[RMDB]
RNA sequence: GGGAACGACUCGAGUAGAGUCGAAAAAGGUGGCCGCGAUCUUCAAGGCUACGGCGCGGAUAGGUCCGCGCUGAUCGUUUUCCUCCAACGACGCUAUGGCUUCUUUCCUUCACCCGCAGGGGCGUUCAAAACUUCUCGAGGUUCGCCUCGAGAAGAACAUCACUGUAAUGUUCGCAUUACAGUGAUGAAAAGAAACAACAACAACAAC
Reactivity to DMS in 0.01 (KOAc 150mM, MgCl2 10mM, bicine 150mM(pH8.5), 24C), signal-to-noise 2, nucleotides 027 to 156: a070g020g020u000g000g040c040c020g020c070g020a050u000c030u000u000c120a100a300g020g030c010u000a040c020g000g020c010g010c000g020g000a110u000a170g030g000u000c000c010g020c000g000c000u000g010a020u000c030g030u000u000u010u010c000c020u000c050c020a100a160c050g010a080c060g010c030u000a080u000g020g000c030u000u010c030u000u000u000c020c010u000u010c000a090c020c000c010g040c180a100g000g020g030g000c040g020u010u020c030a080a050a070a180c020u010u000c000u000c000g020a030g030g030u000u010c280g020c020c000u000c010g020a020g000a000a010g000a060a130
Reactivity to 2A3 in 0.01 (KOAc 150mM, MgCl2 10mM, bicine 150mM(pH8.5), 24C), signal-to-noise 6, nucleotides 027 to 156: a000g050g000u010g000g000c020c010g070c070g050a060u010c010u030u020c030a020a010g000g010c010u000a020c020g010g000c010g000c010g010g000a060u110a220g260g180u050c000c000g000c000g000c000u010g000a030u010c000g000u070u030u080u040c010c010u030c020c020a070a050c060g050a010c020g000c040u060a040u160g040g010c000u050u010c000u030u100u040c010c000u040u060c040a060c030c030c010g030c070a050g000g020g030g000c010g030u060u070c040a040a030a060a090c000u000u000c000u000c000g010a010g020g020u040u070c190g060c030c000u000c000g000a000g000a000a000g000a000a000